This 207-nucleotide RNA was probed chemically with 2A3 and DMS. Conditions: 150 mM KOAc, 10 mM MgCl2 and 150 mM bicine (pH 8.5), 24 C. The DMS profile rests on 2,290 reads. DMS adducts were read by reverse transcription with MarathonRT. For 2A3, 1,046 sequencing reads were counted. It was measured as part of the RMDB library M2RFPK. Reactivities are given for positions 27 through 156. For 2A3 the reverse transcriptase was SuperScript II with manganese.
RNA sequence: GGGAACGACUCGAGUAGAGUCGAAAAAACCCGUUGAUUGAAAUUGAACCGUCCUGUUAUCGAAAGAUAGGCAGAAGAUACGAAAUGUGUGCCAGCAUGGGAAGUAAAGGCAGACCGUGGUUCCCUUAAAAUCGUCGAAUCUUCGGAUUCGACGAAACAAUCAGGAUGUCUUCGGACAUCCUGAUUGAAAAGAAACAACAACAACAAC
Reactivity to 2A3 in 0.01 (KOAc 150mM, MgCl2 10mM, bicine 150mM(pH8.5), 24C), signal-to-noise 2, nucleotides 027 to 156: a000a000c020c000c000g020u050u030g110a300u040u040g030a080a120a120u120u110g010a040a010c040c040g060u050c000c000u020g020u050u010a030u030c030g020a040a040a010g010a030u010a010g090g000c030a030g040a060a000g040a060u070a110c060g010a020a040a130u040g020u010g010u020g030c010c030a010g040c060a120u110g040g020g050a030a040g030u080a020a100a080g010g000c000a000g050a030c010c000g030u050g020g010u010u030c010c000c000u050u050a080a230a030a050u020c000g000u000c000g010a000a000u020c000u030u080c170g050g000a000u000u000c000g000a000c000g010a000a000a000
Reactivity to DMS in 0.01 (KOAc 150mM, MgCl2 10mM, bicine 150mM(pH8.5), 24C), signal-to-noise 1, nucleotides 027 to 156: a060a160c030c000c000g050u000u000g010a100u000u010g000a040a070a100u010u010g000a070a120c000c040g050u000c010c010u000g010u000u000a050u030c030g030a170a110a200g030a050u000a040g000g040c020a070g020a090a070g020a180u000a100c080g000a170a080a040u000g020u020g010u000g010c000c000a090g030c060a090u010g020g000g000a050a040g020u000a050a090a070g000g000c030a080g010a060c030c090g050u000g050g010u000u000c040c000c070u000u000a060a050a050a160u000c010g000u000c010g010a030a000u000c010u000u020c300g080g000a010u000u000c030g000a010c000g000a000a020a190